RNA sequence: GGGAACGACUCGAGUAGAGUCGAAAACGAACCGGGCAACAGCUGGUUCCAACCGAAACAUGUCGAAGCAUGACCUCUGCCGAGGUAGUUCGUGGGGUAGAGCGACCGAUUGGGGAGUUCAACUCCGCCCAAAUACGUACUUCGGUACGUAUUUGGGAAAAGAAACAACAACAACAAC
Reactivity to DMS in 0.01 (KOAc 150mM, MgCl2 10mM, bicine 150mM(pH8.5), 24C), signal-to-noise 3, nucleotides 027 to 126: c220g010a000a000c000c010g040g040g010c090a100a130c230a210g030c010u010g000g000u000u000c010c050a030a110c110c000g000a130a080a210c060a020u000g020u020c150g030a070a190g010c020a040u000g000a100c220c020u010c020u010g030c100c010g000a030g000g000u010a090g010u010u010c050g030u000g020g000g000g010u000a070g000a030g010c000g000a190c000c000g000a140u060u000g010g010g030g000a270g000u010u000c040a090a060c000u000c000c010g000
Reactivity to 2A3 in 0.01 (KOAc 150mM, MgCl2 10mM, bicine 150mM(pH8.5), 24C), signal-to-noise 6, nucleotides 027 to 126: c060g000a000a000c000c010g050g030g000c060a240a080c030a230g070c030u040g000g000u020u000c000c010a030a060c010c020g050a060a090a040c040a030u050g030u110c120g120a090a010g050c030a020u080g040a070c000c000u050c020u060g090c040c060g000a010g000g010u010a040g050u030u100c070g040u140g020g000g000g010u020a070g000a010g010c020g020a090c010c000g300a300u170u300g080g000g000g030a010g010u030u020c010a020a030c000u000c020c010g010
The data come from the RNA Mapping Database (RMDB), libraries RFM100 and RFMREP. This 177-nucleotide RNA was probed chemically with DMS and 2A3. High DMS reactivity at an A or C suggests that its Watson-Crick edge is free. DMS adducts were read by reverse transcription with MarathonRT. As a SHAPE reagent, 2A3 marks flexible, mostly unpaired nucleotides at the ribose 2'-OH.